The data come from the RNA Mapping Database (RMDB), library M2PK50. The record gives the reactivity of an RNA of 177 nucleotides to DMS and 2A3.
RNA sequence: GGGAACGACUCGAGUAGAGUCGAAAAGACCUUCAGUUCGCUGAAGGUCGAUGAUGGUAAGAGAGAUUACCAACUGUUAAGUGAUAUGGAUAAGAUCUCUCAGUGAACGUGCUUUCGAGCACGUUAAAAGUCAAUUCUAUUUCGAUAGAAUUGACUUAAAAGAAACAACAACAACAAC
Reactivity to DMS in 0.01 (KOAc 150mM, MgCl2 10mM, bicine 150mM(pH8.5), 24C), signal-to-noise 9, nucleotides 027 to 126: g010a010c000c000u000u000c000a010g010u000u010c210g030c000u000g000a020a000g010g010u000c000g010a030u010g010a140u010g010g010u000a060a140g000a020g000a020g000a020u000u000a050c010c010a060a120c030u000g010u000u010a090a100g020u010g010a120u000a060u000g010g010a120u000a030a040g010a030u000c000u000c000u000c010a220g010u010g010a030a010c000g010u000g000c000u000u000u010c190g010a020g010c000a000c000g010u000u000a020a060
Reactivity to 2A3 in 0.01 (KOAc 150mM, MgCl2 10mM, bicine 150mM(pH8.5), 24C), signal-to-noise 9, nucleotides 027 to 126: g000a000c000c000u000u000c000a030g010u020u100c150g020c090u000g000a000a000g010g000u000c000g000a000u010g010a010u040g000g100u110a240a030g000a000g000a000g000a010u010u030a020c010c000a020a080c030u040g070u210u140a170a090g130u090g190a120u090a090u250g060g020a040u030a110a060g030a060u000c000u000c000u000c010a000g040u060g150a020a000c000g000u000g010c010u060u070u120c210g070a010g000c000a000c000g000u000u010a010a050
Conditions: 150 mM KOAc, 10 mM MgCl2 and 150 mM bicine (pH 8.5), 24 C. High 2A3 reactivity points to a flexible backbone, as in loops and unpaired stretches. For 2A3, 26,619 sequencing reads were counted.